[RMDB]
RNA sequence: GGGAACGACUCGAGUAGAGUCGAAAACUGUCAAACUGAGCAUUUGUUAAAAAAAUUUCGCAUGGUGAAUCCCCCUGUGUGGAGGGGCGACUGGUGAAAAAUCCUUGCUUGUGAUUCAUUAUCGACACCCUCCUCUUAUUUUCGAAUAAGAGGAGGGAAAAGAAACAACAACAACAAC
Reactivity to DMS in 0.01 (KOAc 150mM, MgCl2 10mM, bicine 150mM(pH8.5), 24C), signal-to-noise 2, nucleotides 027 to 126: c030u010g010u040c070a050a110a120c030u030g000a130g030c020a090u030u040u010g010u020u060a000a000a030a090a080a090a090u000u010u010c000g010c130a050u010g020g000u010g000a050a100u030c020c010c020c040c010u000g030u000g000u040g000g020a060g000g000g000g040c140g000a050c100u020g030g010u010g000a010a090a050a090a080u010c020c010u020u010g010c140u000u020g000u020g000a070u010u000c080a070u000u060a060u020c060g000a140c300a040
Reactivity to 2A3 in 0.01 (KOAc 150mM, MgCl2 10mM, bicine 150mM(pH8.5), 24C), signal-to-noise 5, nucleotides 027 to 126: c020u070g050u130c040a110a070a100c090u120g030a040g050c030a070u050u120u130g090u100u170a030a070a040a040a030a080a140u060u130u050c020g020c070a030u040g060g020u040g060a050a070u040c000c010c000c010c000u040g040u050g080u140g190g110a050g010g000g010g000c010g030a030c070u050g040g000u020g060a020a010a000a030a080u110c030c000u030u060g040c030u070u130g030u100g050a050u050u000c010a010u020u110a040u120c020g010a030c020a040